[RMDB]
RNA sequence: GGGAACGACUCGAGUAGAGUCGAAAACUCUGUGGUUCAGGAAACCUGGUUGAAAAACUUUCACCAUGGUUCAUGGAUGGCGAAAAUGCCUAUGAAGUGGUGAAGGCCAUGUUACUUAAAAAGGAGCGACGACAAAGGUUCGCCUUUGUCAAAAGAAACAACAACAACAAC
Reactivity to 2A3 in 0.01 (KOAc 150mM, MgCl2 10mM, bicine 150mM(pH8.5), 24C), signal-to-noise 9, nucleotides 027 to 129: c010u020c010u000g020u030g020g000u040u040c030a000g040g030a080a060a070c000c000u010g010g040u030u110g110a050a050a000a010a020c000u010u020u010c000a010c010c000a010u050g210g000u040u010c000a000u020g110g110a110u120g020g000c010g080a150a070a090a170u290g010c000c000u010a020u020g000a020a020g010u000g010g000u000g010a010a010g000g000c000c000a040u060g050u040u050a130c070u080u120a090a060a040a050a030g090g000a070g010c040g050a050c070
Reactivity to DMS in 0.01 (KOAc 150mM, MgCl2 10mM, bicine 150mM(pH8.5), 24C), signal-to-noise 7, nucleotides 027 to 129: c020u020c010u000g030u020g000g020u020u020c060a050g000g050a020a020a040c010c000u000g040g040u030u000g000a060a070a060a130a190c060u020u000u010c020a000c000c000a010u000g040g050u000u000c030a010u030g010g010a110u020g000g000c010g010a060a080a130a110u090g030c030c010u000a010u040g000a040a020g020u010g000g000u010g000a020a000g010g000c100c060a030u030g050u020u030a090c100u000u020a020a060a070a110a080g000g000a020g030c000g010a090c130
Chemical mapping of a 170-nucleotide RNA with 2A3 and DMS. For 2A3 the reverse transcriptase was SuperScript II with manganese. Values cover nucleotides 27 to 129. The RNA was probed in 150 mM KOAc, 10 mM MgCl2 and 150 mM bicine (pH 8.5) at 24 C. For DMS the reverse transcriptase was MarathonRT.